Structure probing data (DMS and 2A3) for a 207-nucleotide construct. Source: RMDB library OK3TST, as collected in RNAgym. The reactions ran in a buffer of 150 mM KOAc, 10 mM MgCl2 and 150 mM bicine (pH 8.5), at 24 C. For 2A3 the reverse transcriptase was SuperScript II with manganese. High 2A3 reactivity points to a flexible backbone, as in loops and unpaired stretches.

[RMDB]
RNA sequence: GGGAACGACUCGAGUAGAGUCGAAAAUAUCUUCAACUUUUAUUUUAAGUUCAGGGUUACAUAUGCAGGAUGUGCAGGUUUGUUACACAGGUAAACGUGUGUCAUGGUGGUUUACAGCACAGAUCGUCUGAUCACCCAGGUAUUAAGCCCAGAAUCACGUAAAUUUAAAUUUCGAUUUAAAUUUACGAAAAGAAACAACAACAACAAC
Reactivity to DMS in 0.01 (KOAc 150mM, MgCl2 10mM, bicine 150mM(pH8.5), 24C), signal-to-noise 3, nucleotides 027 to 156: u000a040u000c020u000u000c040a050a060c030u000u030u000u010a060u000u020u000u010a020a070g000u010u010c060a090g030g010g030u000u000a080c090a100u000a030u000g020c080a170g010g020a100u000g010u000g030c030a070g000g000u000u000u010g020u000u000a060c070a080c020a060g000g020u000a050a070a090c070g020u020g020u000g030u010c070a080u010g020g030u000g030g020u000u000u010a080c050a060g050c030a300c060a100g010a080u000c040g000u000c060u010g020a070u000c020a070c020c020c020a230g030g020u000a080u000u010a050a160g020c030c000c020a150g000a090a100u000c040a100
Reactivity to 2A3 in 0.01 (KOAc 150mM, MgCl2 10mM, bicine 150mM(pH8.5), 24C), signal-to-noise 4, nucleotides 027 to 156: u050a010u070c050u210u100c030a030a070c020u030u100u260u200a200u160u210u130u140a120a000g010u020u050c060a030g010g000g050u050u100a040c040a040u110a050u190g040c020a010g010g090a040u010g010u020g020c000a000g020g100u080u140u130g040u080u070a010c020a000c020a030g050g050u110a070a200a030c070g060u040g010u010g030u060c010a040u070g030g040u020g020g040u050u070u120a080c080a010g000c020a010c020a030g050a120u020c020g120u030c090u040g030a070u030c010a020c000c000c010a010g050g000u010a010u050u060a050a030g010c010c000c020a040g100a030a020u150c100a020